[RMDB]
RNA sequence: GGGAACGACUCGAGUAGAGUCGAAAACUAAAAUAUUUUAUUUGUAAUCAUUCUAGGCUGCCGAGAGACGAGCUUCAUUUACGCAAUCACCAGCGCGGCGGUGACCCACUCGAUUGCCAGGGCCUGCCUAGUACUCCAUUUUCGAAUGGAGUACUAGAAAAGAAACAACAACAACAAC
Reactivity to 2A3 in 0.01 (KOAc 150mM, MgCl2 10mM, bicine 150mM(pH8.5), 24C), signal-to-noise 1, nucleotides 027 to 126: c020u100a020a020a050a120u210a220u140u300u300u140a290u130u090u090g050u150a210a250u300c020a020u280u000c070u130a090g040g080c000u000g030c010c010g090a050g020a030g000a110c070g010a030g000c000u090u040c030a080u020u130u100a020c000g000c030a050a180u060c000a030c030c040a070g060c000g010c000g030g000c000g000g010u020g000a000c000c010c000a010c040u120c040g160a170u120u080g000c000c030a020g060g010g010c010c030u000g000c010
Reactivity to DMS in 0.01 (KOAc 150mM, MgCl2 10mM, bicine 150mM(pH8.5), 24C), signal-to-noise 2, nucleotides 027 to 126: c020u010a020a060a060a170u000a090u000u000u020u040a090u040u060u000g000u000a130a170u000c020a050u010u000c040u020a140g040g000c020u010g000c050c020g000a130g020a130g000a110c060g010a050g020c050u000u000c040a050u010u000u020a120c120g020c060a080a080u000c070a040c120c050a070g010c040g020c080g000g010c050g030g020u010g000a130c070c040c040a110c110u010c070g000a060u000u000g020c070c020a130g000g000g000c030c040u010g000c150